Background: The data come from the RNA Mapping Database (RMDB), library M2RFPK. An RNA of 207 nucleotides, treated with 2A3 and read out base by base. The RNA was probed in 150 mM KOAc, 10 mM MgCl2 and 150 mM bicine (pH 8.5) at 24 C.
RNA sequence: GGGAACGACUCGAGUAGAGUCGAAAAGAAACUCGUUUCGCGUUGGCUGCCUAAUUCAAGGAAUUAGCGUGCCUUCAUGCUAAGGGUUUGAUAUCUGCUAAAACGCGGUGCAUUCAUCAAUGCAGGUCUCAUCCAAAUGCCUUCGGGCAUUUGGAAAGUGAAUGCUUCCUUUCGAGGAAGCAUUCACAAAAGAAACAACAACAACAAC
Reactivity to 2A3 in 0.01 (KOAc 150mM, MgCl2 10mM, bicine 150mM(pH8.5), 24C), signal-to-noise 1, nucleotides 027 to 156: g100a010a010a010c020u000c020g060u030u070u090c040g000c000g000u000u000g020g000c000u050g010c110c000u000a000a010u010u070c070a200a190g110g050a070a010u000u000a020g010c060g100u020g010c030c000u050u060c070a150u170g030c040u060a000a020g010g010g040u000u000u000g020a000u020a060u080c040u010g000c010u150a010a180a000a100c100g010c030g060g000u020g040c050a080u030u240c040a020u040c080a140a000u050g020c020a000g000g050u060c030u000c000a090u010c010c000a010a000a000u010g000c000c000u050u050c110g050g000g000c010a010u000u000u000g000g010a000a000a000
For 2A3, 631 sequencing reads were counted.